[RMDB]
RNA sequence: GGGAACGACUCGAGUAGAGUCGAAAAGUGAAAGCUCCUUCUCUCGCAAUGUGUAACUCAUGAUUCUCAUGACCCCUGGUUGGAGAGAUCCGGACUAGGAGCCAGGGGGCCUCUGAUUCUGCCUGCCAAAACUGUCGUAAGUUCGCUUACGACAGAAGAGUGUAUGGAUCUUCGGAUCCAUACACUCAAAAGAAACAACAACAACAAC
Reactivity to 2A3 in 0.01 (KOAc 150mM, MgCl2 10mM, bicine 150mM(pH8.5), 24C), signal-to-noise 2, nucleotides 027 to 156: g100u070g080a180a020a030g050c010u070c010c010u020u040c010u000c030u010c040g090c050a080a100u040g070u020g030u160a100a040c020u040c020a000u040g040a140u220u050c060u030c120a080u090g070a140c000c000c000c020u000g050g050u020u110g050g010a080g000a010g010a050u010c010c030g130g030a040c040u080a070g030g030a020g000c020c020a020g010g000g000g010g000c000c000u000c000u000g060a130u080u010c030u060g040c020c000u040g040c010c000a020a080a020a100c040u000g010u000c000g000u000a000a000g000u010u060c130g010c150u000u000a000c000g000a000c010a000g000a000a000

Background:
An RNA of 207 nucleotides, treated with 2A3 and read out base by base. For 2A3, 776 sequencing reads were counted.